[RMDB]
RNA sequence: GGGAACGACUCGAGUAGAGUCGAAAAAAAUGGUUACUAACUGGUUUUAUUUUGUUUCGAUUUUUCGACAUGGUAAAACCUUGGCCAAUUGGAUGGUUAGAUAAUAAAGUUCAUGGCGGCUUUGGCACGGCUUAAAAGGUUUCGACCUUUUAAGCCGAAAAGAAACAACAACAACAAC
Reactivity to DMS in 0.01 (KOAc 150mM, MgCl2 10mM, bicine 150mM(pH8.5), 24C), signal-to-noise 1, nucleotides 027 to 126: a070a080a020u000g000g000u000u030a080c120u000a040a130c170u010g000g050u000u000u010u000a000u000u030u010u010g020u080u000u050c010g020a070u010u010u010u060u000c000g010a010c050a030u010g000g010u000a000a000a000a010c010c010u000u030g000g000c050c000a120a040u010u070g010g030a080u010g000g000u000u010a000g010a060u000a090a040u020a050a150a000g000u000u000c000a080u010g000g000c100g000g010c060u000u010u020g030g010c220a160
Reactivity to 2A3 in 0.01 (KOAc 150mM, MgCl2 10mM, bicine 150mM(pH8.5), 24C), signal-to-noise 2, nucleotides 027 to 126: a000a000a000u150g040g020u130u030a060c030u030a190a140c010u000g000g000u000u000u000u000a030u030u020u030u010g170u010u130u040c000g020a020u120u020u100u300u040c000g000a000c000a040u000g000g000u010a000a020a100a120c000c000u000u020g000g000c000c020a060a030u070u130g050g000a060u060g050g110u040u090a010g000a070u100a170a070u070a170a080a040g020u020u090c040a010u110g050g040c020g040g000c010u090u080u060g110g000c060a020